RNA sequence: GGGAACGACUCGAGUAGAGUCGAAAAGGGGUCUCACCAGGAUUCUUGGAUUUAGAUAAGAGGAUGGUCUGAAGCCUCCACGGACCAUCUACCCACCUUAUCUUGUCAGAAUCCUCCCUGAGACGGAGGCACCCAAAGACUGAGUUCGCUCAGUCAACUCAUGCACCUACUUCGGUAGGUGCAUGAGAAAAGAAACAACAACAACAAC
Reactivity to 2A3 in 0.01 (KOAc 150mM, MgCl2 10mM, bicine 150mM(pH8.5), 24C), signal-to-noise 1, nucleotides 027 to 156: g010g000g010g000u020c000u000c010a010c110c140a010g000g010a040u020u050c020u220u300g130g000a100u300u300u080a020g000a000u030a000a000g000a000g030g000a000u010g010g000u000c000u020g000a020a000g020c000c000u000c000c000a000c010g020g000a000c010c010a000u000c000u020a030c020c030c010a060c000c000u000u000a000u010c000u000u000g040u000c100a120g000a020a030u000c010c000u040c000c020c020u010g000a010g010a000c010g000g000a000g000g010c010a000c010c020c000a080a240a030g000a000c000u020g000a010g020u120u190c220g090c060u010c000a000g020u000c010a010a010

The data come from the RNA Mapping Database (RMDB), library RNAMAK. This 207-nucleotide RNA was probed chemically with 2A3. 2A3 adducts were read by reverse transcription with SuperScript II with manganese. The 2A3 profile rests on 872 reads. High 2A3 reactivity points to a flexible backbone, as in loops and unpaired stretches.